[RMDB]
RNA sequence: GGGAACGACUCGAGUAGAGUCGAAAAACUUCAUCUUCGGAUGAAGUAAAAAAGCGUACUACGUGAGGCCAGCAAGUCCGGGAUCCCAAAUAGGAUCCGGAUGAUGACCUGGCUCCCCACCACGUAUCGCAAAAAGUAUACCUUUCGAGGUAUACAACGAUCAUAUUGGCUUCGGCCAAUAUGAUCGAAAAGAAACAACAACAACAAC
Reactivity to 2A3 in 0.01 (KOAc 150mM, MgCl2 10mM, bicine 150mM(pH8.5), 24C), signal-to-noise 1, nucleotides 027 to 156: a000c000u000u000c000a020u020c000u130u070c140g060g000a010u020g020a000a000g070u110a050a020a000a000a000a000g030c050g040u070a140c010u020a030c000g000u000g000a000g010g000c000c000a000g030c050a050a210g040u000c000c020g250g000g040a070u070c030c040c090a300a300a040u220a060g000g000a000u000c000c000g000g000a000u020g010a080u060g040a020c000c000u000g000g000c000u050c130c000c010c000a020c000c000a000c000g010u030a050u300c100g040c050a000a060a000a000a000g060u010a000u020a000c000c000u000u030u100c300g130a020g020g000u000a000u000a000c010a030a000

This 207-nucleotide RNA was probed chemically with 2A3. Values cover nucleotides 27 to 156. The 2A3 profile rests on 502 reads. 2A3 adducts were read by reverse transcription with SuperScript II with manganese.